[RMDB]
RNA sequence: GGGAACGACUCGAGUAGAGUCGAAAAACGCUGGAGCGGCGGGAGAGUAUAGUCAUUAUUGUAGUCCGGGUACACCCAGGCAGCGCCGUUACGGACCUGCCAGCGAUUUGCUUCUGUGCCGUCAGCGGGUGUAUGCAACAUUCGUGUUGCAUACACCAAAAGAAACAACAACAACAAC
Reactivity to 2A3 in 0.01 (KOAc 150mM, MgCl2 10mM, bicine 150mM(pH8.5), 24C), signal-to-noise 2, nucleotides 027 to 126: a010c000g000c000u010g080g040a200g120c010g030g060c030g020g040g020a060g000a020g040u080a050u110a150g040u020c030a030u020u300a110u100u110g120u070a050g090u000c080c040g040g020g030u120a070c050a060c000c000c010a020g040g000c000a010g000c000g000c080c000g040u070u090a100c070g000g050a100c000c000u010g020c000c020a050g000c050g020a030u050u010u070g000c000u040u050c020u050g180u150g000c000c040g030u060c010a000g020c000g010
Reactivity to DMS in 0.01 (KOAc 150mM, MgCl2 10mM, bicine 150mM(pH8.5), 24C), signal-to-noise 2, nucleotides 027 to 126: a200c030g020c000u010g020g010a130g070c000g010g020c030g010g000g000a070g000a070g020u000a100u010a010g000u000c050a090u000u000a130u000u010g000u000a050g000u020c040c070g010g000g010u000a070c110a070c080c050c050a180g010g010c010a030g010c160g030c010c000g000u000u010a140c150g010g000a080c060c010u000g020c000c030a080g000c110g010a060u000u000u010g010c010u000u000c020u000g010u010g030c040c030g010u010c030a060g010c040g030